[RMDB]
RNA sequence: GGGAACGACUCGAGUAGAGUCGAAAACUAAAAGAGAGUUAACCUUAUACUAAGUAGCUCAUAGAAUAAUCGGUAGAGGCCGGUAGCGAAAGUAUAAUGAUCUCCCAAGAUGUGGGCAAGCCUAGCUGGUUUGUUCUUGGUUCGCCAAGAACAAACCAAAAGAAACAACAACAACAAC
Reactivity to 2A3 in 0.01 (KOAc 150mM, MgCl2 10mM, bicine 150mM(pH8.5), 24C), signal-to-noise 1, nucleotides 027 to 126: c000u050a030a020a050a050g240a000g000a020g080u000u160a140a070c000c010u000u000a000u000a010c000u020a010a010g020u060a000g090c000u000c000a120u150a100g020a020a030u160a230a050u100c020g000g000u100a170g020a020g300g210c020c000g010g050u030a000g000c000g000a090a000a000g000u000a000u000a000a000u020g000a000u000c050u030c020c000c000a030a060g080a040u070g020u030g020g060g000c010a070a070g070c000c070u000a090g000c030u060